RNA sequence: GGGAACGACUCGAGUAGAGUCGAAAACAACAGAGGGAUAGACCACCACGGACUGUUGCCGAAGUUCAACAAAAUUUGCGUUGGACUGAGAGACCACAAGACCAGAAUGUUAAGACGUGGGAUGAGCAGUGAAUAUACAGUUCGCUGUAUAUUCACUAAAAGAAACAACAACAACAAC
Reactivity to DMS in 0.01 (KOAc 150mM, MgCl2 10mM, bicine 150mM(pH8.5), 24C), signal-to-noise 9, nucleotides 027 to 126: c060a050a050c080a040g000a120g010g010g000a140u030a090g010a130c080c040a110c020c020a030c020g000g010a180c030u010g010u010u010g010c050c010g000a130a020g010u000u010c000a000a000c010a040a100a070a220u020u050u030g020c280g000u000u000g000g000a000c000u000g000a300g010a070g000a240c020c020a090c150a070a080g010a110c080c080a080g010a100a080u020g000u010u010a070a080g010a080c040g020u000g000g000g000a080u030g000a090g020c180
Reactivity to 2A3 in 0.01 (KOAc 150mM, MgCl2 10mM, bicine 150mM(pH8.5), 24C), signal-to-noise 9, nucleotides 027 to 126: c030a020a010c010a020g080a100g050g070g030a060u130a100g130a090c020c020a040c010c010a020c030g010g020a030c010u030g020u040u040g020c020c000g020a020a000g000u010u010c010a000a000c010a020a110a160a210u180u270u300g120c100g010u000u000g000g000a000c000u000g000a010g000a000g010a040c000c010a030c030a070a020g040a030c010c040a020g080a200a090u170g050u160u160a120a020g060a040c040g020u030g010g050g050a140u130g070a040g090c090